[RMDB]
RNA sequence: GGGAACGACUCGAGUAGAGUCGAAAAGUAGUGUCUACACUAAUAGCUGCCUUGUAUCGUCUGAUGGACAACCUGGCGGUGAUGCUAUUAGUUUGAGUUUUAAUAACCUUUUAGGGUUUGAUUCUAGCGAGGAGGGCGUUCGCGCCCUCCAAAAGAAACAACAACAACAAC
Reactivity to 2A3 in 0.01 (KOAc 150mM, MgCl2 10mM, bicine 150mM(pH8.5), 24C), signal-to-noise 2, nucleotides 027 to 129: g050u060a000g000u050g000u000c090u060a000c030a100c020u000a000a000u000a000g050c000u000g040c000c000u120u060g140u020a280u050c030g040u090c010u130g170a070u240g250g000a030c000a000a060c000c020u000g110g000c000g300g000u080g050a020u210g000c100u000a000u000u030a030g000u000u050u100g010a090g000u000u120u100u000a040a300u120a010a010c000c000u000u220u070u300a110g000g000g130u000u000u090g030a000u040u000c010u000a070g030c000g060a000
Reactivity to DMS in 0.01 (KOAc 150mM, MgCl2 10mM, bicine 150mM(pH8.5), 24C), signal-to-noise 1, nucleotides 027 to 129: g060u060a040g000u040g010u110c020u000a060c090a020c030u010a070a060u000a030g020c000u000g010c010c090u030u010g040u020a140u020c050g050u040c000u020g030a210u000g050g040a100c080a000a000c050c040u010g000g000c030g000g000u000g040a060u060g000c000u010a040u000u000a030g000u050u030u000g020a130g050u010u010u050u000a050a070u060a000a090c040c040u020u050u030u030a070g070g000g000u000u000u000g000a050u010u010c100u020a050g010c080g010a140
Chemical mapping of a 170-nucleotide RNA with 2A3 and DMS. The data come from the RNA Mapping Database (RMDB), library 15KLIB. The RNA was probed in 150 mM KOAc, 10 mM MgCl2 and 150 mM bicine (pH 8.5) at 24 C.